[RMDB]
RNA sequence: GGGAACGACUCGAGUAGAGUCGAAAAGAAGACGUGACGAAAAGUCACGUCAAUACAGAGACUAGGCAACUCUGAAAAACACAACAAAAGUGUAAAAGCCUAGCAGGAUCGAGAGAUCCUGAAAAGAGGUAAUGAUAAUCUUCGGAUUAUCAUUACCAAAAGAAACAACAACAACAAC
Reactivity to DMS in 0.01 (KOAc 150mM, MgCl2 10mM, bicine 150mM(pH8.5), 24C), signal-to-noise 6, nucleotides 027 to 126: g030a220a140g020a020c000g020u010g010a010c000g000a130a100a070a180g010u000c010a000c000g020u000c000a030a060u030a150c000a010g010a010g000a170c000u000a010g000g000c000a140a020c000u010c000u000g010a010a070a080a080a040c000a000c010a050a110c260a110a110a180a060g010u000g010u010a030a010a030a300g000c000c000u000a010g000c000a000g010g010a000u010c000g000a220g010a180g010a000u000c000c010u000g000a050a040a070a090g000a180
Reactivity to 2A3 in 0.01 (KOAc 150mM, MgCl2 10mM, bicine 150mM(pH8.5), 24C), signal-to-noise 6, nucleotides 027 to 126: g190a100a040g000a000c000g000u000g010a000c010g100a110a150a100a090g000u000c000a000c010g000u000c000a000a000u050a000c000a000g000a000g040a100c010u010a000g020g000c030a110a030c020u000c000u010g030a050a020a000a030a000c040a020c020a160a110c070a030a150a070a080g000u010g010u030a040a050a000a000g000c000c000u000a000g000c000a000g000g000a000u010c010g000a000g000a010g000a110u000c000c000u000g000a010a000a000a010g130a040
This 177-nucleotide RNA was probed chemically with DMS and 2A3. For DMS, 11,672 sequencing reads were counted. The RNA was probed in 150 mM KOAc, 10 mM MgCl2 and 150 mM bicine (pH 8.5) at 24 C.